The data come from the RNA Mapping Database (RMDB), library OK2TST. The record gives the reactivity of an RNA of 177 nucleotides to 2A3 and DMS. For DMS, 3,195 sequencing reads were counted. For DMS the reverse transcriptase was MarathonRT.
RNA sequence: GGGAACGACUCGAGUAGAGUCGAAAACGGGGCGUGACGUCGCGCGUGUGGCUAUUUAGCGAGCCCGACGCGCGCUCGGGCGCCAUUGGCCUCGCCGCGUGGGACUCGGGCGAGACGGUCCUCGAGGCACGCGUUGGGUAUUCGUACCCAACGCGUGAAAAGAAACAACAACAACAAC
Reactivity to 2A3 in 0.01 (KOAc 150mM, MgCl2 10mM, bicine 150mM(pH8.5), 24C), signal-to-noise 2, nucleotides 027 to 126: c020g040g040g000g020c000g040u050g070a150c020g020u060c030g000c000g000c030g000u040g010u050g050g050c040u050a110u190u250u190a200g070c180g030a000g000c020c000c020g030a020c000g000c000g000c010g000c030u010c010g020g010g000c060g000c000c000a070u090u210g040g010c000c000u010c020g010c000c010g230c010g030u040g030g040g030a030c030u020c060g060g090g020c030g000a000g010a020c020g020g000u000c010c020u000c020g060a110g030g030
Reactivity to DMS in 0.01 (KOAc 150mM, MgCl2 10mM, bicine 150mM(pH8.5), 24C), signal-to-noise 2, nucleotides 027 to 126: c020g030g010g000g020c030g020u000g000a150c050g030u000c050g000c010g010c030g030u000g040u010g010g020c020u000a060u000u000u000a130g000c240g000a040g000c010c000c060g000a010c020g000c000g010c010g020c100u000c050g020g020g010c120g030c020c020a080u010u010g020g000c020c020u000c020g020c040c010g000c090g010u000g010g010g000a030c070u000c000g010g010g000c030g000a030g000a080c030g010g030u000c140c000u000c060g000a090g010g000